[RMDB]
An RNA of 177 nucleotides, treated with DMS and 2A3 and read out base by base. The data come from the RNA Mapping Database (RMDB), library M2PK50. For 2A3 the reverse transcriptase was SuperScript II with manganese.

RNA sequence: GGGAACGACUCGAGUAGAGUCGAAAAAAGUGAUUAUUCGUAAUCACUUCACGCCGGGCGCGGUGGCGCGUGCCUGUAGUCCCAGCUACUCGGGAGGCUAUACGACGUACCCGUUCGCGGGUACGAAACUCUGAAAACUAUUCGUAGUUUUCAGAGUAAAAGAAACAACAACAACAAC
Reactivity to DMS in 0.01 (KOAc 150mM, MgCl2 10mM, bicine 150mM(pH8.5), 24C), signal-to-noise 6, nucleotides 027 to 126: a030a000g010u000g000a010u000u000a020u000u020c190g010u000a010a010u000c000a000c000u000u000c090a110c170g010c020c010g010g000g000c000g010c010g010g000u000g000g000c020g000c020g020u000g000c010c010u000g020u000a040g000u000c000c000c000a030g000c010u010a130c050u010c090g010g000g000a040g000g000c010u000a090u010a060c160g010a220c010g010u000a000c000c000c000g020u000u010c180g010c010g010g000g000u000a000c010g000a030a080
Reactivity to 2A3 in 0.01 (KOAc 150mM, MgCl2 10mM, bicine 150mM(pH8.5), 24C), signal-to-noise 4, nucleotides 027 to 126: a000a000g020u010g010a010u020u030a020u050u110c170g030u060a020a000u010c000a000c000u030u030c090a080c080g000c010c000g010g010g000c010g000c010g010g000u010g000g010c010g000c010g000u010g000c010c010u020g030u040a020g020u000c000c000c000a010g000c040u290a240c020u050c120g010g000g000a010g000g000c020u040a040u030a130c180g050a010c010g000u000a000c010c010c010g000u020u030c260g000c020g050g000g000u000a000c000g000a010a000